[RMDB]
RNA sequence: GGGAACGACUCGAGUAGAGUCGAAAAGCAGCAAUAAUGGCAUAAAACGAUGGGUGCAUGUUGGUAAGCUCACUCUCAUCUCAGAUCCCCCAUUCACAUGAGGUGGCAGAUGGAGUGUCCGCCACUGGCCAGUGGGCUGGUUCGCCAGCCCACUGGCAAAAGAAACAACAACAACAAC
Reactivity to 2A3 in 0.01 (KOAc 150mM, MgCl2 10mM, bicine 150mM(pH8.5), 24C), signal-to-noise 1, nucleotides 027 to 126: g000c040a010g000c070a050a010u280a300a000u120g000g000c010a080u090a040a270a140a000c000g040a000u090g050g050g050u000g030c070a080u010g000u000u090g110g040u000a070a070g040c070u070c000a010c000u030c010u050c010a010u000c000u030c010a040g090a280u070c000c000c000c220c000a090u260u300c050a080c150a040u000g040a090g220g000u050g040g000c000a000g000a000u000g000g000a160g080u220g000u000c000c080g000c000c000a000c010u040g040